RNA sequence: GGGAACGACUCGAGUAGAGUCGAAAAUCGGUGCCCAACUCCCAUCCAGGCUGCUGCCAUUCCCCGACUGUUGGCAGGGGAUGCGAAUAUCAUCGCAAAAGCCCGAACCGGGACUGGAAAAACGGCCACUAUUACGGCUAUUCGUAGCCGUAAUAGUAAAAGAAACAACAACAACAAC
Reactivity to 2A3 in 0.01 (KOAc 150mM, MgCl2 10mM, bicine 150mM(pH8.5), 24C), signal-to-noise 9, nucleotides 027 to 126: u100c040g050g020u080g040c010c000c010a030a070c030u040c010c010c010a040u050c020c020a020g040g000c020u080g010c020u040g020c030c010a140u030u050c020c000c000c010g070a100c080u120g090u170u070g060g040c070a090g010g000g000g020a010u020g000c000g010a030a010u130a080u300c100a030u030c000g000c000a020a030a010a050g100c000c000c010g040a060a050c040c020g010g010g050a060c020u040g030g000a060a090a010a020a030c020g020g010c000c010
Reactivity to DMS in 0.01 (KOAc 150mM, MgCl2 10mM, bicine 150mM(pH8.5), 24C), signal-to-noise 9, nucleotides 027 to 126: u030c060g000g010u020g010c040c000c020a110a150c090u010c000c000c010a120u030c060c060a070g000g020c030u000g010c060u000g010c020c020a120u020u010c020c020c020c060g020a130c150u020g010u020u010g000g000c080a160g000g000g010g000a110u010g000c020g010a050a150u030a110u030c300a110u000c010g010c020a040a080a090a140g010c010c010c020g010a070a100c090c060g010g000g010a060c040u020g010g000a030a040a050a080a100c080g010g010c070c050

This 177-nucleotide RNA was probed chemically with 2A3 and DMS. High DMS reactivity at an A or C suggests that its Watson-Crick edge is free. Reactivities are given for positions 27 through 126. The 2A3 profile rests on 32,840 reads. Conditions: 150 mM KOAc, 10 mM MgCl2 and 150 mM bicine (pH 8.5), 24 C.